[RMDB]
RNA sequence: GGGAACGACUCGAGUAGAGUCGAAAACAAUGGUCUCCCAGUCUGUGAGACUUUUGCUAGACAUCACAUCAGACAGACUGGAAUGCUGUCUAUGGAAUUCCAACAGGAGAGAAGGAUGCUUGCCAAAGUGAUUACUGGGGUUCGCCCCAGUAAUCACAAAAGAAACAACAACAACAAC
Reactivity to DMS in 0.01 (KOAc 150mM, MgCl2 10mM, bicine 150mM(pH8.5), 24C), signal-to-noise 1, nucleotides 027 to 126: c010a010a070u030g000g000u000c010u000c020c010c150a130g010u010c140u030g010u010g000a090g000a040c060u000u010u000u020g030c080u000a120g010a100c080a080u000c060a070c060a040u010c120a060g010a090c010a040g000a100c020u000g000g000a100a050u010g120c010u000g000u000c080u150a120u000g000g000a120a090u000u000c010c030a130a140c170a090g010g010a010g010a040g000a170a080g010g010a030u000g000c060u000u000g000c070c020a090a090a080
Reactivity to 2A3 in 0.01 (KOAc 150mM, MgCl2 10mM, bicine 150mM(pH8.5), 24C), signal-to-noise 1, nucleotides 027 to 126: c010a030a080u050g040g000u000c020u000c040c030c010a080g170u120c150u200g030u060g050a010g000a020c000u020u010u010u080g010c000u030a030g000a050c010a040u000c030a020c000a050u040c010a030g040a100c000a000g000a050c030u100g070g220a020a050u160g000c010u010g030u010c010u100a030u080g070g090a030a090u060u040c060c020a100a040c050a180g060g010a030g010a020g000a120a000g060g010a010u050g010c020u030u060g060c040c000a120a030a030
Conditions: 150 mM KOAc, 10 mM MgCl2 and 150 mM bicine (pH 8.5), 24 C. The record gives the reactivity of an RNA of 177 nucleotides to DMS and 2A3. It was measured as part of the RMDB library OK2TST.